[RMDB]
RNA sequence: GGGAACGACUCGAGUAGAGUCGAAAAAGAGUACGGCCGCAAGGUUUCCGGUUGUGGAUGGCAGCGUGUGUGUCGCCCCGUCGUCUAGUGCUGGUUCUAGGGCUGGGGCGUCAGGAUCCAGGUAAAAUCAGGUGGAUUAAUUCGUUAAUCCACCUGAAAAAGAAACAACAACAACAAC
Reactivity to DMS in 0.01 (KOAc 150mM, MgCl2 10mM, bicine 150mM(pH8.5), 24C), signal-to-noise 3, nucleotides 027 to 126: a080g000a100g010u000a050c090g010g000c020c050g020c120a080a070g010g000u000u000u010c040c020g020g010u010u000g020u000g010g000a070u010g010g000c050a030g010c060g030u010g020u000g020u000g010u000c010g000c010c020c010c010g010u000c030g010u010c000u000a020g000u010g000c080u000g000g000u000u000c010u000a020g000g000g000c020u010g040g000g010g020c010g010u000c030a030g010g010a070u000c030c020a060g010g010u000a050a070a080a150
Description
This 177-nucleotide RNA was probed chemically with DMS. The RNA was probed in 150 mM KOAc, 10 mM MgCl2 and 150 mM bicine (pH 8.5) at 24 C.